The data come from the RNA Mapping Database (RMDB), library M2RFPK.
The record gives the reactivity of an RNA of 207 nucleotides to 2A3.
Conditions: 150 mM KOAc, 10 mM MgCl2 and 150 mM bicine (pH 8.5), 24 C.
Reactivities are rounded to 0.1 and cut off at 0 and 3.

RNA sequence: GGGAACGACUCGAGUAGAGUCGAAAAUCUAGGGUUCCGCAUGUCAAUUGACAUGGACUGGUCCGAGAGAAAACACAUACGCGUAAAUAGAAGCGCGUAUGCACACGGAGGGAAAAAACCCCGGGAGAAUGGGAUUAUUAGUUCGCUAAUAAUCCAACCCAAUAAAGUUCUUCGGAACUUUAUUGGGAAAAGAAACAACAACAACAAC
Reactivity to 2A3 in 0.01 (KOAc 150mM, MgCl2 10mM, bicine 150mM(pH8.5), 24C), signal-to-noise 2, nucleotides 027 to 156: u000c000u040a130g020g000g020u000u020c000c000g000c000a010u000g010u000c040a190a300u170u300g010a000c010a000u000g030g010a090c050u100g010g000u010c000c000g000a010g000a010g010a000a060a010a000c030a010c000a010u000a010c000g020c010g020u120a080a300a080u190a300g120a300a080g040c000g000c000g010u000a000u010g030c030a030c010a000c050g020g000a260g120g040g000a000a140a090a000a030a180c020c000c020c000g090g040g040a150g050a160a130u160g030g000g000a000u000u000a010u010u000a000g010u020u030c210g000c150u000a000a000u000a010a010u020c000c000a020a030